Structure probing data (2A3 and DMS) for a 177-nucleotide construct. The reactions ran in a buffer of 150 mM KOAc, 10 mM MgCl2 and 150 mM bicine (pH 8.5), at 24 C. The 2A3 profile rests on 1,122 reads.
[RMDB]
RNA sequence: GGGAACGACUCGAGUAGAGUCGAAAAAGUACACCGGAAUCGCUGGGGUGACCGGGUCCUUUCUUGGAUCAACCCGCUCAAUACCCAGAAAUUUGGGCGUGCCCCCGCGAGACUGCUAGCCGAGUAGCGGCUGAAAGUUCUUCGGAACUUUCAGCCGAAAAGAAACAACAACAACAAC
Reactivity to 2A3 in 0.01 (KOAc 150mM, MgCl2 10mM, bicine 150mM(pH8.5), 24C), signal-to-noise 3, nucleotides 027 to 126: a000g140u110a050c070a050c050c040g030g000a110a060u010c010g000c030u040g020g000g000g020u070g040a050c010c030g010g020g010u040c000c020u080u290u180c120u200u190g010g000a030u030c040a040a150c010c040c000g000c000u010c000a020a050u070a130c000c010c020a080g080a050a070a030u020u010u010g060g010g020c030g000u040g000c000c010c000c000c010g000c040g020a020g020a040c000u020g010c000u040a050g060c040c050g030a020g080u060a010g020
Reactivity to DMS in 0.01 (KOAc 150mM, MgCl2 10mM, bicine 150mM(pH8.5), 24C), signal-to-noise 1, nucleotides 027 to 126: a020g030u030a080c110a130c160c010g000g000a010a140u000c020g000c000u000g000g050g000g040u020g000a080c140c110g050g000g000u000c030c020u000u000u040c080u030u000g020g000a110u010c080a200a180c060c240c000g040c090u000c010a020a050u020a120c000c040c080a050g000a020a060a090u010u000u000g000g030g010c000g010u050g000c000c000c000c000c030g000c020g030a000g000a100c080u010g000c030u000a090g000c080c070g010a130g030u030a080g000

DMS adducts were read by reverse transcription with MarathonRT.